[RMDB]
The record gives the reactivity of an RNA of 177 nucleotides to 2A3 and DMS. For 2A3 the reverse transcriptase was SuperScript II with manganese. Conditions: 150 mM KOAc, 10 mM MgCl2 and 150 mM bicine (pH 8.5), 24 C.
RNA sequence: GGGAACGACUCGAGUAGAGUCGAAAACGUCAGACGACGAAGUCGGUCCAUCUGCGGUAAGAGACCGACAUAGAGUUCGAAGCAGAACGAACAACCGCAGAUACACGAUUGGAGUGUGAAUGAGAGACAUGGGUAUGAUAUUCGUAUCAUACCCAUGAAAAGAAACAACAACAACAAC
Reactivity to 2A3 in 0.01 (KOAc 150mM, MgCl2 10mM, bicine 150mM(pH8.5), 24C), signal-to-noise 7, nucleotides 027 to 126: c010g020u030c020a070g080a300c120g010a010c020g020a170a010g010u010c000g000g000u000c020c030a050u010c010u000g000c010g010g030u070a110a020g050a020g010a090c000c010g000a000c000a000u060a010g080a010g010u000u010c010g010a080a010g130c140a070g040a140a020c010g010a020a030c020a020a000c000c000g000c000a000g000a010u040a020c100a000c030g140a120u090u220g140g040a170g040u040g000u040g050a090a120u210g010a060g030a010g020a060
Reactivity to DMS in 0.01 (KOAc 150mM, MgCl2 10mM, bicine 150mM(pH8.5), 24C), signal-to-noise 7, nucleotides 027 to 126: c030g020u010c010a100g050a120c210g000a020c030g020a140a110g000u010c000g010g010u000c030c110a070u000c000u000g010c000g010g010u000a070a120g000a200g000a020c020c000g010a020c020a060u030a060g000a110g000u010u000c000g010a100a110g000c210a150g010a070a060c000g010a030a050c040a110a030c000c000g000c000a010g000a050u010a100c150a040c050g010a130u000u010g000g000a230g030u010g000u010g000a030a080u010g000a140g000a130g000a200

Source: RMDB library OK1LIB, as collected in RNAgym.
Values cover nucleotides 27 to 126.